This 177-nucleotide RNA was probed chemically with 2A3 and DMS.

[RMDB]
RNA sequence: GGGAACGACUCGAGUAGAGUCGAAAAGAGGGGGGCUAAGCAACUCCAUACCCGUCACAGCUAGCUCCAGUUUGUCUGCGUCCUCACCACACACCAGCCUAAAUCUGACAUCAUCUGUAAAGCUAAGUAUUAACACACUGUUCGCAGUGUGUUAAUAAAAAGAAACAACAACAACAAC
Reactivity to 2A3 in 0.01 (KOAc 150mM, MgCl2 10mM, bicine 150mM(pH8.5), 24C), signal-to-noise 2, nucleotides 027 to 126: g160a040g040g060g000g000g000g000c000u020a020a020g020c010a030a020c000u030c040c010a000u050a090c010c030c000g090u110c050a040c010a050g040c000u020a010g010c010u030c000c020a040g040u050u130u070g070u060c030u010g030c030g050u000c010c000u020c000a030c000c020a020c000a000c000a020c020c000a010g070c030c000u120a140a150a070u040c020u030g030a030c000a060u040c020a010u030c050u030g130u170a020a120a000g000c020u020a090a000g090
Reactivity to DMS in 0.01 (KOAc 150mM, MgCl2 10mM, bicine 150mM(pH8.5), 24C), signal-to-noise 5, nucleotides 027 to 126: g010a110g010g020g000g010g000g000c050u000a070a110g020c050a090a120c060u000c020c020a100u000a130c020c000c010g030u010c110a120c160a070g000c040u000a050g010c020u000c030c020a110g010u000u010u000g020u000c020u010g000c100g000u000c030c020u010c070a090c040c030a090c100a060c070a040c060c050a060g010c040c030u000a020a070a090u000c060u010g000a070c060a070u000c050a030u010c050u000g010u010a050a090a090g000c070u000a070a120g010
The RNA was probed in 150 mM KOAc, 10 mM MgCl2 and 150 mM bicine (pH 8.5) at 24 C. 2A3 is a SHAPE reagent: it acylates the 2'-hydroxyl of flexible nucleotides of all four kinds. For DMS the reverse transcriptase was MarathonRT. Values cover nucleotides 27 to 126. For DMS, 5,654 sequencing reads were counted.